[RMDB]
RNA sequence: GGGAACGACUCGAGUAGAGUCGAAAAGUGUUAGCGUUCGCGCUAACACAAAGAACGCUGCAACGCGCAGCGCGCUCGCGAGAGCAGGAAAGAGCGUUAUAAAAAGCUCGGGCUUCGGCCCGAGCAACGAUCUACUCUACUUCGGUAGAGUAGAUCGAAAAGAAACAACAACAACAAC
Reactivity to 2A3 in 0.01 (KOAc 150mM, MgCl2 10mM, bicine 150mM(pH8.5), 24C), signal-to-noise 1, nucleotides 027 to 126: g010u000g000u000u000a010g000c000g010u030u060c260g000c020g040c080u000a000a000c000a010c000a000a000a020g020a110a000c020g000c010u020g000c050a150a080c110g050c030g000c070a010g040c000g020c030g040c000u000c010g010c020g030a080g000a020g110c060a030g030g140a070a090a030g090a020g000c000g030u120u070a120u060a170a260a000a040a040g000c040u000c030g040g000g000c000u060u030c300g130g010c050c000c020g000a000g000c000a010a000
Reactivity to DMS in 0.01 (KOAc 150mM, MgCl2 10mM, bicine 150mM(pH8.5), 24C), signal-to-noise 1, nucleotides 027 to 126: g000u000g000u000u000a000g010c010g030u000u000c290g050c010g050c000u000a000a030c000a010c000a050a070a090g010a090a260c050g020c010u010g010c030a090a040c030g050c010g000c020a030g010c010g000c120g000c000u010c010g010c300g010a100g030a030g010c010a100g010g000a050a060a040g010a080g000c000g010u010u000a220u020a030a080a140a120a070g000c010u000c020g030g030g020c000u000u030c220g010g020c000c000c000g000a010g010c000a000a000
Description:
An RNA of 177 nucleotides, treated with 2A3 and DMS and read out base by base. For DMS, 846 sequencing reads were counted. The reactions ran in a buffer of 150 mM KOAc, 10 mM MgCl2 and 150 mM bicine (pH 8.5), at 24 C. The data come from the RNA Mapping Database (RMDB), library M2PK50. For DMS the reverse transcriptase was MarathonRT. For 2A3 the reverse transcriptase was SuperScript II with manganese. The 2A3 profile rests on 1,221 reads.